Chemical mapping of a 177-nucleotide RNA with DMS and 2A3. It was measured as part of the RMDB library RFMREP. For 2A3, 7,083 sequencing reads were counted. Values cover nucleotides 27 to 126.

RNA sequence: GGGAACGACUCGAGUAGAGUCGAAAAUCCCUUUCCCAUCGGAUCUGAACACUGGUCUUGGUGGUCGUAAAAGGAGGAAAAGUAAUAGUGAAGCUGGCCUAAAUGUUGUAAUCUGGUAUAUGGCAUGCAUAUAAGCCAAGUUCGCUUGGCUUAUAUGAAAAGAAACAACAACAACAAC
Reactivity to DMS in 0.01 (KOAc 150mM, MgCl2 10mM, bicine 150mM(pH8.5), 24C), signal-to-noise 9, nucleotides 027 to 126: u000c010c000c010u000u000u000c040c000c010a090u010c080g010g000a050u000c030u000g010a110a100c190a090c110u000g010g010u000c030u000u020g050g020u000g010g010u010c110g010u010a050a050a080a080g000g010a070g010g000a060a060a070a100g010u010a060a080u010a070g010u010g000a080a080g020c040u000g010g000c020c030u000a060a080a080u000g000u000u000g010u000a060a080u000c050u000g010g010u000a050u000a070u000g000g010c060a090u000g000
Reactivity to 2A3 in 0.01 (KOAc 150mM, MgCl2 10mM, bicine 150mM(pH8.5), 24C), signal-to-noise 4, nucleotides 027 to 126: u000c000c000c000u000u020u000c010c000c000a020u030c020g040g010a030u000c010u050g100a170a020c070a030c140u060g000g020u020c000u040u070g020g010u020g020g030u000c000g040u040a050a070a070a020g060g020a050g010g060a030a080a070a000g050u090a050a100u070a120g080u030g080a040a010g020c040u030g010g010c010c020u060a100a110a060u070g010u030u020g020u030a030a050u040c040u040g030g060u090a100u010a040u170g060g000c020a010u070g010